[RMDB]
RNA sequence: GGGAACGACUCGAGUAGAGUCGAAAAGCGCCAGUUUGUCCGUCAGGGCGGCAUCUGGAUGCCGGGCGAUGAAGUGAAGAAAGUCACCUGCCGUCGCGGUACCGUGAGCGAAAUAUGGACCCGCAACGCUCCACUGACCCUUCGGGGUCAGUGGAGCAAAAGAAACAACAACAACAAC
Reactivity to 2A3 in 0.01 (KOAc 150mM, MgCl2 10mM, bicine 150mM(pH8.5), 24C), signal-to-noise 1, nucleotides 027 to 126: g050c000g030c000c000a000g000u070u160u000g110u060c000c000g170u140c090a090g130g000g110c000g020g000c020a050u000c030u000g120g000a090u000g090c000c000g000g000g000c000g180a060u140g000a000a050g000u080g050a000a000g180a120a210a000g240u050c000a000c000c030u050g200c030c090g060u110c090g000c050g120g060u030a060c000c090g180u150g000a000g000c120g020a000a200a000u300a300u170g000g000a000c000c000c000g020c000a060a060c000